[RMDB]
RNA sequence: GGGAACGACUCGAGUAGAGUCGAAAAGAUAUGGAGUCAUCCUUUGUGCCGAUGAAAUCGGAAACGAUGGAGGCACUGAGGAGUGACUCCUAAGUCAAACCCUGAACUGGUUCGCCAGUUCAGGGAACAAUAGUAGUACGUUCGCGUACUACUAUUGAAAAGAAACAACAACAACAAC
Reactivity to 2A3 in 0.01 (KOAc 150mM, MgCl2 10mM, bicine 150mM(pH8.5), 24C), signal-to-noise 8, nucleotides 027 to 126: g030a030u080a050u190g000g010a000g000u000c000a010u020c000c000u000u000u020g000u000g010c030c040g200a300u050g000a030a020a000u010c020g030g000a090a030a030c010g000a000u010g010g040a010g000g010c000a000c000u000g010a000g010g000a030g040u050g000a000c000u000c000c000u010a060a000g010u000c030a070a050a190c000c000c000u000g000a000a000c000u000g000g080u110u120c300g090c080c000a000g000u000u010c000a000g000g000g000a010a010
Reactivity to DMS in 0.01 (KOAc 150mM, MgCl2 10mM, bicine 150mM(pH8.5), 24C), signal-to-noise 9, nucleotides 027 to 126: g010a040u000a300u010g000g000a020g010u000c000a070u000c000c000u000u000u000g010u000g010c000c010g000a110u010g010a070a100a030u000c000g000g000a120a080a180c000g000a020u000g000g010a070g010g010c000a010c000u000g000a010g000g010a020g010u000g000a010c000u000c000c000u000a010a060g000u000c030a110a130a210c000c000c000u000g010a010a010c000u000g000g000u000u010c260g010c000c000a000g010u000u000c000a000g000g000g010a010a020